The data come from the RNA Mapping Database (RMDB), library OK3TST. An RNA of 207 nucleotides, treated with DMS and 2A3 and read out base by base. The reactions ran in a buffer of 150 mM KOAc, 10 mM MgCl2 and 150 mM bicine (pH 8.5), at 24 C. DMS adducts were read by reverse transcription with MarathonRT.
RNA sequence: GGGAACGACUCGAGUAGAGUCGAAAACGAGCAACUUUGUCGAUCGCAAAGCAUGUCUGCCGAUCAUGAAGCAAUGCCAGCGCGUCACCGUCUCGCUGCGCGACAACGAUCUAGAACGUUUGCUGUGCAUGCUCCGCAGCAACAAUUCGUGCGAUUCUGAUCUGUGUUGAUUCGUCAACACAGAUCAAAAAGAAACAACAACAACAAC
Reactivity to DMS in 0.01 (KOAc 150mM, MgCl2 10mM, bicine 150mM(pH8.5), 24C), signal-to-noise 2, nucleotides 027 to 156: c050g000a090g030c010a100a080c020u000u010u000g020u000c030g030a100u000c180g000c010a010a080a090g040c030a070u010g030u020c080u000g050c030c010g010a110u010c110a120u000g000a070a020g020c010a110a100u010g020c000c020a090g030c010g010c020g000u000c030a120c060c040g020u010c040u000c020g000c090u000g030c000g060c080g010a080c020a000a000c020g000a100u000c030u000a150g010a070a080c040g020u000u000u010g040c010u010g000u020g020c050a060u010g000c020u000c000c030g000c030a070g020c000a040a040c040a030a100u000u010c040g000u010g010c030g000a140u010u000c050
Reactivity to 2A3 in 0.01 (KOAc 150mM, MgCl2 10mM, bicine 150mM(pH8.5), 24C), signal-to-noise 7, nucleotides 027 to 156: c060g010a030g040c030a020a300c050u020u060u050g090u110c140g020a030u010c010g000c050a050a080a070g030c060a060u070g070u100c040u060g070c090c020g020a020u040c010a060u090g030a030a000g010c030a020a060u030g000c000c010a010g010c010g010c010g060u060c040a050c100c050g070u040c020u040c040g000c020u060g000c020g010c010g090a030c040a090a020c040g040a050u060c030u150a050g020a130a020c030g030u020u070u120g000c000u010g030u070g050c010a040u040g010c010u040c030c010g010c000a000g030c000a010a050c020a040a080u100u090c040g030u050g020c020g010a020u090u010c060